[RMDB]
RNA sequence: GGGAACGACUCGAGUAGAGUCGAAAACUAUGUACAGACAGUACAGUGGAUAAGGUCUGUCGAUAUCCAACUUCAACAAUGGUACUUGCAGUGGUAUCUAUCAAGAUAGGCAGGCUAUCAUAGAAAGAAGAUGUGUAUUAUUCGUAGUGCGCAUCUUAAAAGAAACAACAACAACAAC
Reactivity to 2A3 in 0.01 (KOAc 150mM, MgCl2 10mM, bicine 150mM(pH8.5), 24C), signal-to-noise 6, nucleotides 027 to 126: c010u010a020u060g010u000a010c010a060g180a030c020a020g030u010a000c000a010g030u050g060g020a070u030a090a030g040g000u000c000u000g000u000c010g010a010u000a000u020c010c010a020a020c020u020u020c000a020a020c010a050a070u080g050g000u030a030c000u010u020g020c030a020g010u030g040g010u010a010u000c000u010a140u060c050a070a020g010a050u030a010g000g000c000a010g000g000c010u000a000u020c000a020u040a030g060a020a080a010g100
Reactivity to DMS in 0.01 (KOAc 150mM, MgCl2 10mM, bicine 150mM(pH8.5), 24C), signal-to-noise 9, nucleotides 027 to 126: c040u010a050u010g000u010a020c030a120g010a090c180a110g010u010a020c020a120g020u020g010g000a090u010a060a080g010g000u000c010u010g000u010c010g000a070u010a020u010c030c040a040a090c080u020u020c020a060a090c170a070a050u010g000g010u010a040c040u000u000g010c100a090g010u020g010g010u000a010u000c000u010a110u040c230a080a070g000a040u000a040g000g000c000a010g000g000c100u000a010u010c030a050u010a080g000a080a090a090g010

Source information
This 177-nucleotide RNA was probed chemically with 2A3 and DMS. The DMS profile rests on 82,678 reads. For 2A3, 51,347 sequencing reads were counted.